[RMDB]
RNA sequence: GGGAACGACUCGAGUAGAGUCGAAAAAUGGUACGGUUCCAAAUACAUAAGUAAUGAUGUGAUUAGAGUCCCCACAACUGAGUCUAUGUGUAGGGAAUCAAUACAAAAAGUGAUGAAAGGCAUACCAAUUUGUAAAGCGAUUCGUCGCUUUACAAAUAAAAGAAACAACAACAACAAC
Reactivity to DMS in 0.01 (KOAc 150mM, MgCl2 10mM, bicine 150mM(pH8.5), 24C), signal-to-noise 5, nucleotides 027 to 126: a090u010g000g000u000a060c220g010g000u010u000c010c010a030a050a070u000a050c010a030u000a050a080g010u010a080a140u010g010a080u000g020u010g000a160u010u000a140g000a130g010u000c020c030c030c020a040c030a050a060c040u000g000a270g000u020c070u010a010u010g010u000g020u010a030g010g010g000a020a020u000c000a040a120u000a060c070a040a030a050a090a110g030u000g010a080u000g000a040a060a070g000g000c050a040u000a110c060c040a050
Reactivity to 2A3 in 0.01 (KOAc 150mM, MgCl2 10mM, bicine 150mM(pH8.5), 24C), signal-to-noise 2, nucleotides 027 to 126: a020u100g010g010u060a010c020g020g000u010u060c020c020a030a070a000u080a010c030a010u070a120a100g040u060a130a080u120g040a040u080g000u020g050a080u060u170a140g040a040g200u080c030c000c050c030a030c020a050a020c040u050g020a020g110u020c000u040a030u050g030u010g010u010a010g000g000g000a020a000u000c010a020a040u110a050c000a010a140a010a020a020g050u050g040a040u060g030a080a020a040g120g020c000a000u000a060c000c000a010
Overview: An RNA of 177 nucleotides, treated with DMS and 2A3 and read out base by base. The reactions ran in a buffer of 150 mM KOAc, 10 mM MgCl2 and 150 mM bicine (pH 8.5), at 24 C. The 2A3 profile rests on 1,702 reads.